Structure probing data (2A3 and DMS) for a 177-nucleotide construct. The 2A3 profile rests on 1,817 reads.
RNA sequence: GGGAACGACUCGAGUAGAGUCGAAAAAUCGUAGCGCGGCCAUCAGCGCCUACGGCCUGAUGAUCUGAUCCGCGUGCUCGUACCGUACGGCCGCGAGCGUGGUACUGAGUACGCUGAUACUGGUACGUCCACAUAACCUCUUCGGAGGUUAUGUGGAAAAAGAAACAACAACAACAAC
Reactivity to 2A3 in 0.01 (KOAc 150mM, MgCl2 10mM, bicine 150mM(pH8.5), 24C), signal-to-noise 2, nucleotides 027 to 126: a000u080c010g000u010a020g050c010g010c030g100g100c030c010a070u030c040a070g040c020g050c070c010u070a070c060g020g030c010c010u060g070a040u040g010a030u010c060u050g030a020u020c010c030g000c000g000u000g000c000u000c000g000u000a000c000c040g040u120a040c080g270g090c000c020g200c160g060a070g000c000g040u080g000g000u010a030c040u140g010a000g020u010a020c000g000c020u020g010a010u030a150c010u060g000g000u030a090c030g080
Reactivity to DMS in 0.01 (KOAc 150mM, MgCl2 10mM, bicine 150mM(pH8.5), 24C), signal-to-noise 2, nucleotides 027 to 126: a050u000c030g020u000a040g010c110g020c010g020g040c090c080a070u010c070a080g010c120g000c070c010u000a010c040g000g000c020c000u000g000a040u000g010a070u000c020u010g010a030u010c010c070g010c000g020u000g000c010u000c020g000u000a000c000c010g020u000a060c070g020g000c000c040g030c130g020a110g010c030g000u010g000g010u010a000c010u010g020a040g020u000a010c010g010c000u000g000a050u000a080c050u010g000g020u000a080c110g000
Reactivities are given for positions 27 through 126.